An RNA of 207 nucleotides, treated with 2A3 and DMS and read out base by base. DMS adducts were read by reverse transcription with MarathonRT. The DMS profile rests on 8,356 reads.
[RMDB]
RNA sequence: GGGAACGACUCGAGUAGAGUCGAAAAGUAAUAGAUAACUGGAUGCAGCGUAGGUUACAACGCAUAUCCAGUACGAAUGGUACCUGUAAAUAAAAUAUGUAACCUAGUACAAGUACCAACAGAAGGAUAAGCGAUGGUGAUGUCAAUCACAUUUGCAUAUAAUACGUGCUUUCGAGCACGUAUUAUAAAAAGAAACAACAACAACAAC
Reactivity to 2A3 in 0.01 (KOAc 150mM, MgCl2 10mM, bicine 150mM(pH8.5), 24C), signal-to-noise 1, nucleotides 027 to 156: g030u050a030a120u110a170g080a050u140a160a070c000u010g020g010a020u030g110c230a140g000c240g010u030a030g000g010u010u000a000c010a010a000c000g010c010a020u030a000u120c000c000a000g000u000a000c020g030a060a120u070g010g000u000a010c000c000u000g030u030a020a120a060u180a040a130a080a000u150a040u040g010u010a000a000c000c030u020a030g050u020a020c000a030a000g000u000a020c020c010a030a020c020a030g160a100a010g100g030a070u050a150a050g000c020g030a010u070g070g110u020g020a040u050g080u180c080a090a040u040c030a010c000a040u050u080u240g010c030a000
Reactivity to DMS in 0.01 (KOAc 150mM, MgCl2 10mM, bicine 150mM(pH8.5), 24C), signal-to-noise 4, nucleotides 027 to 156: g040u000a070a140u010a090g010a170u000a090a090c000u000g000g000a030u000g020c160a040g010c010g040u000a040g000g030u000u000a020c000a110a050c000g030c020a110u010a090u000c010c000a010g020u000a050c080g000a120a080u010g010g020u000a000c010c000u010g010u010a040a120a140u000a080a100a100a170u010a110u000g000u000a000a040c010c010u000a090g020u000a030c030a040a020g020u000a010c010c020a030a160c100a070g000a120a070g000g010a090u000a050a130g040c020g020a060u000g030g020u000g020a030u010g020u010c210a090a100u000c040a030c030a080u000u000u010g030c040a300